[RMDB]
RNA sequence: GGGAACGACUCGAGUAGAGUCGAAAACUAACAACAUUAACAGAUUUAAUGUUGCAAUCACUCGUGCCCAAAAAGGUAUUCUUUGUGUUAUGACAUCUCAGGCACUCUUUGAGUCCUUAGAGUUUACGAACAGUCUAGUUCGCUAGACUGAAAAGAAACAACAACAACAAC
Reactivity to DMS in 0.01 (KOAc 150mM, MgCl2 10mM, bicine 150mM(pH8.5), 24C), signal-to-noise 9, nucleotides 027 to 129: c070u040a100a230c020a000a000c020a020u020u010a000a060c300a170g060a200u100u020u000a010a030u000g000u000u000g010c200a090a080u020c110a010c080u000c060g020u040g000c010c000c000a050a050a040a070a040g040g000u020a050u010u010c010u020u010u030g010u000g000u010u000a060u040g010a030c110a090u050c030u000c010a020g030g020c130a040c010u020c030u020u040u090g020a020g000u000c010c020u040u020a050g000a030g000u000u000u000a040c030g000a070a120
Reactivity to 2A3 in 0.01 (KOAc 150mM, MgCl2 10mM, bicine 150mM(pH8.5), 24C), signal-to-noise 9, nucleotides 027 to 129: c030u110a030a020c000a000a000c000a000u000u010a020a030c050a160g260a300u080u080u040a000a000u000g000u000u010g020c050a030a110u120c020a040c080u070c040g080u070g040c000c000c000a050a050a020a010a030g210g010u150a170u080u040c060u050u120u080g080u020g040u090u130a110u160g020a030c050a300u020c010u010c030a000g000g000c160a010c020u020c050u050u140u300g020a010g010u020c000c000u010u010a010g010a000g020u010u080u090a030c040g020a070a010

Conditions: 150 mM KOAc, 10 mM MgCl2 and 150 mM bicine (pH 8.5), 24 C. An RNA of 170 nucleotides, treated with DMS and 2A3 and read out base by base. DMS adducts were read by reverse transcription with MarathonRT.